[RMDB]
RNA sequence: GGGAACGACUCGAGUAGAGUCGAAAAUCCUAAGUCCGUGUGGAGCGUCUGAACGGGCAACAGCACACUCGGAAACGAGUGUGACAUGCCUUAGUAAGACGCGUUGAAACACGGAUAUGGAAAAAUCCGGUGAGCUCUUUCGAGAGCUCACCGGAAACUAAAGGACUAGUUUCGACUAGUCCUUUAGAAAAGAAACAACAACAACAAC
Reactivity to DMS in 0.01 (KOAc 150mM, MgCl2 10mM, bicine 150mM(pH8.5), 24C), signal-to-noise 1, nucleotides 027 to 156: u000c000c000u030a100a250g010u000c000c000g000u020g010u030g000g010a250g010c000g040u000c000u010g020a290a300c290g000g000g000c000a040a020c140a120g020c010a000c000a010c000u010c000g000g000a210a080a300c010g000a040g010u000g010u000g000a060c060a300u000g000c010c010u000u000a180g030u000a160a030g020a020c000g040c010g030u000u010g020a280a170a050c000a000c010g020g000a000u000a000u000g000g000a010a170a180a070a070u000c050c000g040g000u000g010a000g000c010u000c000u010u000u010c240g020a110g050a040g020c000u000c020a000c040c040g000g020a000a030a040